[RMDB]
RNA sequence: GGGAACGACUCGAGUAGAGUCGAAAAGAUAUGGAUUAGCUGUGAUAGGGAAACGUGGACGGGAGAACUCGAUCGGAAACGAUCGGUUCGAAGAACGUCCACGUUUCCCUGGAGCUAAUCCUAAGUCCAUAAACGUACUGUUCGCAGUACGUUUAUGAAAAGAAACAACAACAACAAC
Reactivity to DMS in 0.01 (KOAc 150mM, MgCl2 10mM, bicine 150mM(pH8.5), 24C), signal-to-noise 6, nucleotides 027 to 126: g010a100u010a300u010g010g000a010u000u000a000g020c000u000g010u020g000a170u010a010g000g010g010a000a010a010c000g030u000g000g000a020c000g010g000g000a120g010a020a010c000u020c040g010a010u000c000g010g000a100a110a240c010g010a010u000c000g010g000u000u000c000g000a100a150g010a120a160c010g000u000c000c000a000c000g010u000u000u000c000c000c000u000g000g000a010g020c000u000a010a010u000c000c000u000a010a090g000u000c040
Structure probing data (DMS) for a 177-nucleotide construct. Conditions: 150 mM KOAc, 10 mM MgCl2 and 150 mM bicine (pH 8.5), 24 C. For DMS, 18,989 sequencing reads were counted.